Structure probing data (DMS and 2A3) for a 177-nucleotide construct. 2A3 adducts were read by reverse transcription with SuperScript II with manganese. The reactions ran in a buffer of 150 mM KOAc, 10 mM MgCl2 and 150 mM bicine (pH 8.5), at 24 C. DMS adducts were read by reverse transcription with MarathonRT.
[RMDB]
RNA sequence: GGGAACGACUCGAGUAGAGUCGAAAACUCGAAUCUUUCGAGAUUCGAGACUCUCGAAGUGUCAAUAAGAUCGAAAAGAUCGGCGAGCAUAAAAUAGACACAAUGCUGCUUGAUUCGUCAAGCAGAACAUUAGAUUUGAAUUCGUUCAAAUCUAAUGAAAAGAAACAACAACAACAAC
Reactivity to DMS in 0.01 (KOAc 150mM, MgCl2 10mM, bicine 150mM(pH8.5), 24C), signal-to-noise 9, nucleotides 027 to 126: c010u000c000g000a020a000u000c010u000u000u010c160g020a020g010a010u000u000c000g000a020g010a100c110u000c000u000c010g010a120a120g020u000g000u000c010a150a110u010a120a130g010a010u000c000g000a120a080a100a180g000a010u000c000g010g010c060g000a040g000c300a050u010a020a020a040a070u000a080g000a020c010a010c020a170a110u010g000c000u000g000c000u000u000g000a020u000u010c230g010u000c000a000a000g000c000a000g000a060a140
Reactivity to 2A3 in 0.01 (KOAc 150mM, MgCl2 10mM, bicine 150mM(pH8.5), 24C), signal-to-noise 9, nucleotides 027 to 126: c000u000c000g000a000a010u000c010u010u120u170c220g100a020g000a020u000u010c000g000a010g020a020c020u010c000u000c030g060a260a060g010u000g000u010c020a020a080u120a210a060g010a010u010c010g050a110a190a130a130g010a010u010c000g000g020c030g040a040g000c050a100u160a070a120a030a030u140a050g010a000c010a000c000a010a070u150g010c000u000g000c000u000u000g010a010u040u050c130g050u010c070a000a000g000c000a000g010a020a000